[RMDB]
RNA sequence: GGGAACGACUCGAGUAGAGUCGAAAAGAUAUGGAUCAUGUCAACAGCGUGCGGAUCGGAAACGAUCCCACGACAUGAGAUGAUCCUAAGUCAAAGCGUUCGUUGUUGUUCGCAACAACGAACGCAAUCAUACAUCUCGGUUCGCCGAGAUGUAUGAAAAAGAAACAACAACAACAAC
Reactivity to DMS in 0.01 (KOAc 150mM, MgCl2 10mM, bicine 150mM(pH8.5), 24C), signal-to-noise 4, nucleotides 027 to 126: g010a020u000a110u010g000g000a000u000c000a020u000g000u000c010a020a240c300a140g020c010g000u000g010c260g030g000a000u000c000g010g000a010a020a060c000g010a010u000c000c000c000a010c010g010a060c160a070u000g000a010g000a020u000g000a000u000c000c000u000a000a070g000u010c010a110a110a140g000c000g010u000u000c000g010u000u000g010u000u000g010u000u010c180g020c020a020a020c000a000a010c010g000a010a000c000g030c000a000a000
Reactivity to 2A3 in 0.01 (KOAc 150mM, MgCl2 10mM, bicine 150mM(pH8.5), 24C), signal-to-noise 3, nucleotides 027 to 126: g010a010u030a000u070g010g020a010u000c010a000u030g180u270c010a060a060c070a300g110c010g000u020g080c260g020g000a010u000c000g020g000a040a000a010c000g000a000u000c000c000c000a000c000g010a120c010a100u020g000a030g010a020u000g010a000u000c000c000u010a030a000g010u010c050a100a100a030g010c020g020u000u000c010g000u010u000g020u000u010g050u060u110c300g000c130a000a000c000a000a010c010g000a000a000c010g020c010a010a000